[RMDB]
RNA sequence: GGGAACGACUCGAGUAGAGUCGAAAAAAAUUGUCGACUUCGGGCCAGGAACACCAUCUCUUGCCUUGUGGAAAGUAAUCUUAAUCCUCAUAGCAGUUGUCGUUGUAAUUGUUAUCAUUGCAACAACAAUCUUCUGUUCCGUUAGAAAGAACCAGUCGUCUAGAUGUCAUUUCGAUGACAUCUAGACAAAAGAAACAACAACAACAAC
Reactivity to 2A3 in 0.01 (KOAc 150mM, MgCl2 10mM, bicine 150mM(pH8.5), 24C), signal-to-noise 4, nucleotides 027 to 156: a000a000a030u150u060g030u030c020g030a060c000u050u030c070g010g000g000c010c010a030g020g010a060a030c050a050c050c020a130u090c050u010c030u090u060g000c000c000u010u010g040u030g010g030a030a100a100g060u140a090a090u110c040u020u080a040a060u040c020c010u030c050a060u050a060g010c030a020g030u020u010g000u020c010g010u000u000g000u000a030a060u040u060g130u220u230a110u240c060a020u020u030g000c000a020a010c000a000a000c000a020a050u050c060u080u040c020u050g040u030u050c010c020g080u040u040a070g100a150a160a000g030a000a050c040c020a050g180u190c020
Reactivity to DMS in 0.01 (KOAc 150mM, MgCl2 10mM, bicine 150mM(pH8.5), 24C), signal-to-noise 1, nucleotides 027 to 156: a080a040a100u010u000g010u000c000g020a130c040u000u000c040g030g050g000c030c010a110g020g000a040a040c020a110c060c070a150u000c050u000c070u000u000g000c010c020u010u020g000u010g000g000a040a050a150g030u000a120a090u000c070u000u000a080a160u000c010c010u000c030a040u010a070g020c050a080g030u000u000g010u000c010g020u000u010g000u010a030a100u000u010g010u020u000a110u000c050a060u000u000g000c000a010a010c010a000a020c020a000a040u000c030u000u000c030u010g000u000u000c020c030g020u010u010a130g010a130a090a070g000a000a100c030c000a100g020u000c110